[RMDB]
RNA sequence: GGGAACGACUCGAGUAGAGUCGAAAAAGAGCCGGAUACGUCCGGCUCAACGGGGGAUACGUGUGGUGCCGUCCGCUCCCCCCAUGGCAUAACAAAUGCACCACACACUAGGCUACGGCCUAGUGAAAAAAGGUGUAUGUGUUCGCACAUACACCAAGACAAGUCAUUACUUCGGUAAUGACUUGUCAAAAGAAACAACAACAACAAC
Reactivity to 2A3 in 0.01 (KOAc 150mM, MgCl2 10mM, bicine 150mM(pH8.5), 24C), signal-to-noise 2, nucleotides 027 to 156: a010g010a010g000c010c010g000g000a010u010a040c160g100u000c000c000g010g000c000u000c000a000a010c000g000g000g000g010g000a010u040a150c020g030u010g000u000g070g000u000g000c010c010g040u040c010c060g020c050u060c000c000c000c000c000c010a160u180g050g010c060a090u150a230a050c070a090a070a020u090g000c000a000c000c000a000c010a000c000a000c000u000a000g010g010c000u010a010c210g040g000c000c000u000a000g010u030g050a080a020a000a000a000a000g000g000u000g000u000a000u010g010u000g020u040u080c230g010c060a000c000a000u010a000c000a000c000c000a010a000
The record gives the reactivity of an RNA of 207 nucleotides to 2A3. The 2A3 profile rests on 2,340 reads. The RNA was probed in 150 mM KOAc, 10 mM MgCl2 and 150 mM bicine (pH 8.5) at 24 C. 2A3 adducts were read by reverse transcription with SuperScript II with manganese. Reactivities are given for positions 27 through 156.